RNA sequence: GGGAACGACUCGAGUAGAGUCGAAAAGAUAUGGAGAUCUCCACUUUCCUUUGAUCGAUUGUCGGAAACGACAAUCGGGAGGAAGGUGGAGGAUCUCCUAAGUCAAAGAAGGUGUUCGCACCUUCAAGUUGUGAGUUAUCUUCGGAUAACUCACAACAAAAGAAACAACAACAACAAC
Reactivity to 2A3 in 0.01 (KOAc 150mM, MgCl2 10mM, bicine 150mM(pH8.5), 24C), signal-to-noise 2, nucleotides 027 to 126: g040a010u080a040u280g000g010a020g000a000u000c020u000c010c000a000c000u040u040u050c000c000u280u220u090g240a230u200c030g000a000u000u020g000u000c000g050g070a140a030a110c030g030a000c000a010a000u000c000g000g040g000a010g000g000a010a010g000g050u010g000g000a010g000g010a000u000c000u010c000c000u000a020a010g000u020c030a100a060a150g010a010a000g020g000u030g030u110u260c300g070c160a000c020c000u000u000c020a000a010
Reactivity to DMS in 0.01 (KOAc 150mM, MgCl2 10mM, bicine 150mM(pH8.5), 24C), signal-to-noise 2, nucleotides 027 to 126: g010a020u010a300u010g000g000a020g020a010u000c020u000c000c010a030c000u030u000u000c000c000u000u030u030g000a140u010c000g010a010u010u000g040u000c000g000g010a130a070a300c020g000a020c000a000a000u000c000g000g000g000a010g020g010a020a010g000g010u000g000g000a010g000g000a000u000c000u000c000c000u010a020a110g010u010c050a120a130a210g010a010a000g030g020u000g020u000u020c270g000c010a010c000c000u020u000c000a080a100
Chemical mapping of a 177-nucleotide RNA with 2A3 and DMS. As a SHAPE reagent, 2A3 marks flexible, mostly unpaired nucleotides at the ribose 2'-OH. For DMS, 1,772 sequencing reads were counted. The RNA was probed in 150 mM KOAc, 10 mM MgCl2 and 150 mM bicine (pH 8.5) at 24 C. Values are in units of 0.01, from 0 to 300, in steps of 10.